[RMDB]
RNA sequence: GGGAACGACUCGAGUAGAGUCGAAAACCCCUCGGAGGUCCACUGGGUGGGUUCACAUCCCCAACCCGCGGGCCGGCUGUUCUUCUUUCUCUUUCCUCGUCUUCCUCGGUCAACCUCCGGAGUUCCUAUACACACGAGUUCGCUCGUGUGAAAAGAAACAACAACAACAAC
Reactivity to DMS in 0.01 (KOAc 150mM, MgCl2 10mM, bicine 150mM(pH8.5), 24C), signal-to-noise 8, nucleotides 027 to 129: c040c000c010c090u000c040g000g040a100g000g000u040c020c060a080c110u080g020g010g040u030g030g000g020u050u060c130a150c240a170u060c100c010c020c010a040a100c000c000c000g000c100g020g010g010c050c010g020g020c040u050g000u000u030c050u000u000c050u000u000u010c020u000c040u030u000u010c000c000u000c000g040u030c030u030u050c060c000u000c050g040g020u000c060a080a110c050c030u000c020c030g000g030a080g030u000u000c000c000u000a080u040a110
Reactivity to 2A3 in 0.01 (KOAc 150mM, MgCl2 10mM, bicine 150mM(pH8.5), 24C), signal-to-noise 9, nucleotides 027 to 129: c000c000c000c000u030c040g070g010a070g010g020u020c020c010a070c160u190g050g000g000u030g010g000g020u150u160c120a090c020a140u150c000c000c000c000a080a200c020c010c010g010c030g000g010g000c000c010g010g000c020u040g030u060u030c010u050u000c000u010u070u010c040u010c000u050u050u040c000c020u030c010g040u010c050u070u040c020c000u000c000g010g010u030c020a050a040c010c000u030c000c010g020g000a030g010u010u000c020c000u090a090u050a080